[RMDB]
RNA sequence: GGGAACGACUCGAGUAGAGUCGAAAACAGAAUACAUGAUGAUCUCAAUCCAACUUGAACUCUCUCACUGAUUACUUGAUGACAAUAAAAUAUCUGAUAUUCUGAAACAGUAACGUUCGCGUUACUGCUGAUGAAUGAGGUUCGCCUCAUUCAUCAGAAAAGAAACAACAACAACAAC
Reactivity to 2A3 in 0.01 (KOAc 150mM, MgCl2 10mM, bicine 150mM(pH8.5), 24C), signal-to-noise 5, nucleotides 027 to 126: c010a020g040a070a020u060a050c050a040u150g010a040u050g060a080u050c020u000c040a050a070u030c040c020a040a050c050u030u060g030a060a040c010u040c010u020c000u010c080a040c060u050g060a180u070u160a070c030u060u070g020a050u120g040a050c020a040a040u170a150a130a050a020u160a040u030c020u010g040a080u050a080u080u030c010u020g040a090a050a030c000a000g010u000a000a000c000g010u030u040c170g000c000g060u000u000a000c000u000g030
Reactivity to DMS in 0.01 (KOAc 150mM, MgCl2 10mM, bicine 150mM(pH8.5), 24C), signal-to-noise 3, nucleotides 027 to 126: c090a060g000a100a010u000a030c060a030u000g000a050u010g000a080u000c040u000c030a050a060u010c060c100a060a100c040u000u010g010a050a130c110u000c050u010c060u000c080a060c110u010g000a070u000u000a070c100u000u010g010a070u010g020a050c080a060a110u010a070a080a080a080u010a070u000c010u000g000a110u000a040u000u000c010u010g000a120a080a180c000a010g000u010a010a010c000g010u010u010c220g030c010g020u000u000a000c000u000g020